[RMDB]
RNA sequence: GGGAACGACUCGAGUAGAGUCGAAAAUGUCACCUCGACCGCGCGCGCGGGCCCUCUCGCAGAGAUGAUUGGAGGGGUCAGUGUUUGCGGGUGACCUCCGAUGCCGCGUGAGGCACUGGCGGCGGUGGGCGCAGGGCUCGUUCGCGAGCCUUGCGCCAAAAGAAACAACAACAACAAC
Reactivity to 2A3 in 0.01 (KOAc 150mM, MgCl2 10mM, bicine 150mM(pH8.5), 24C), signal-to-noise 3, nucleotides 027 to 126: u110g020u040c030a030c120c000u100c040g120a050c020c010g070c010g020c000g010c000g030c010g090g000g010c040c020c000u080c000u000c000g070c110a010g040a000g050a160u240g050a060u110u190g030g010a020g010g050g030g040u010c050a070g040u000g060u230u190u300g040c060g040g030g000u040g030a060c000c000u000c000c000g040a030u150g020c020c020g030c000g040u070g030a050g000g020c020a050c050u010g030g000c000g000g000c020g000g010u050g080
An RNA of 177 nucleotides, treated with 2A3 and read out base by base. The data come from the RNA Mapping Database (RMDB), library OK1LIB.